[RMDB]
Annotation:
Conditions: 150 mM KOAc, 10 mM MgCl2 and 150 mM bicine (pH 8.5), 24 C. Structure probing data (2A3 and DMS) for a 177-nucleotide construct. Reactivities are rounded to 0.1 and cut off at 0 and 3. It was measured as part of the RMDB libraries RFM100 and RFMREP.

RNA sequence: GGGAACGACUCGAGUAGAGUCGAAAAACCGGGCGAAGGGCCCGUAAACGGCGGGGGUAACUAUGACCCUCUUAAGGUAGCGUAAUACCUUGCCGCUUAAUUGGCGGCUUGCAUGAACGGAUUAACGGGCUUACGAUUAAUUCGUUAAUCGUAAGCCAAAAGAAACAACAACAACAAC
Reactivity to 2A3 in 0.01 (KOAc 150mM, MgCl2 10mM, bicine 150mM(pH8.5), 24C), signal-to-noise 4, nucleotides 027 to 126: a030c010c010g000g000g000c050g140a200a140g100g070g010c030c010c000g000u060a060a070a010c020g090g000c050g000g010g000g000g000u030a040a050c090u090a120u300g100a060c000c010c010u010c000u010u080a020a000g000g020u030a010g010c070g100u140a090a080u020a080c020c000u000u050g010c010c000g000c030u110u070a140a030u140u140g020g000c000g010g020c010u020u060g010c050a080u070g050a090a030c030g020g040a080u080u100a060a050c040g070
Reactivity to DMS in 0.01 (KOAc 150mM, MgCl2 10mM, bicine 150mM(pH8.5), 24C), signal-to-noise 3, nucleotides 027 to 126: a110c150c020g020g000g050c020g000a110a050g010g020g000c000c000c050g000u000a010a030a110c070g000g000c090g010g050g010g000g000u000a040a080c260u040a170u020g010a040c000c000c000u000c050u010u000a010a020g000g020u000a040g000c120g000u000a130a040u010a020c020c000u000u000g010c000c000g010c000u020u000a130a130u030u040g000g010c050g000g010c000u010u010g000c060a100u010g000a120a070c060g000g010a080u020u010a030a120c220g000